[RMDB]
This 177-nucleotide RNA was probed chemically with DMS.
RNA sequence: GGGAACGACUCGAGUAGAGUCGAAAAGAUAUGGAUUAUGGUAGAAUGACCCGACGAAGAACUCGGAAACGAGGGAGUCGCAUUCAAACAUAAUCCUAAGUCAAACAAAGGAGUUCGCUCCUUUGAACCAUUAUUUUACGUUCGCGUAAAAUAAUGGAAAAGAAACAACAACAACAAC
Reactivity to DMS in 0.01 (KOAc 150mM, MgCl2 10mM, bicine 150mM(pH8.5), 24C), signal-to-noise 4, nucleotides 027 to 126: g000a030u010a300u010g000g010a000u000u000a000u000g000g000u020a300g020a010a010u010g000a120c250c150c050g020a040c020g020a090a120g010a130a220c010u000c000g000g000a050a080a170c010g010a010g010g000g000a030g030u000c000g000c010a020u000u000c000a010a110a300c000a000u000a000a000u010c000c000u000a060a060g020u000c050a090a140a240c010a000a020a020g000g000a020g030u000u020c270g010c020u010c000c010u000u010u000g000a140a250
Conditions: 150 mM KOAc, 10 mM MgCl2 and 150 mM bicine (pH 8.5), 24 C. Reactivities are given for positions 27 through 126. It was measured as part of the RMDB library TTRDEL.